The record gives the reactivity of an RNA of 207 nucleotides to 2A3 and DMS. Conditions: 150 mM KOAc, 10 mM MgCl2 and 150 mM bicine (pH 8.5), 24 C. For DMS the reverse transcriptase was MarathonRT. The data come from the RNA Mapping Database (RMDB), library OK3TST.
RNA sequence: GGGAACGACUCGAGUAGAGUCGAAAACGGAAUUAUACCCAGCACAAUGGCAUUUGAAAACCCCGUCGAAACUGAGGACACUGACUUAUUGCUAUGUUUUAUGCUCCUAUCACUAACUUCUACUUAUUUUCUACUUACUGGUAAGCUCUUUAACCGAGUUAGGUAAUAGGUUCGCCUAUUACCUAACAAAAGAAACAACAACAACAAC
Reactivity to 2A3 in 0.01 (KOAc 150mM, MgCl2 10mM, bicine 150mM(pH8.5), 24C), signal-to-noise 8, nucleotides 027 to 156: c020g020g030a020a000u130u060a060u120a140c030c010c000a020g030c050a030c020a070a080u080g050g010c020a040u060u060u210g100a080a070a040a060c030c010c010c010g050u050c040g040a060a060a050c040u080g020a060g030g020a020c010a020c070u050g060a030c030u070u090a050u130u140g020c020u040a040u110g090u020u080u040u030a040u050g010c010u000c000c000u040a030u070c020a020c060u050a130a040c020u090u060c020u060a080c020u080u060a050u090u090u030u020c010u020a110c010u070u010a040c010u010g000g030u030a080a040g020c010u020c010u070u110u070a050a030c030c030g010a030
Reactivity to DMS in 0.01 (KOAc 150mM, MgCl2 10mM, bicine 150mM(pH8.5), 24C), signal-to-noise 3, nucleotides 027 to 156: c050g010g000a090a130u010u010a160u010a110c020c000c000a200g030c070a090c080a090a080u000g010g010c000a080u010u010u020g010a100a100a130a090c020c020c010c040g030u000c030g020a070a050a100c060u010g000a060g000g010a100c050a060c070u010g010a080c090u000u000a060u000u000g030c020u000a070u000g010u000u000u000u040a070u010g010c000u010c010c020u010a070u010c030a090c060u000a080a080c060u010u000c040u000a090c050u010u010a090u000u010u000u000c030u010a080c050u000u000a060c050u000g010g020u000a060a100g000c020u000c020u000u000u000a090a210c070c010g010a250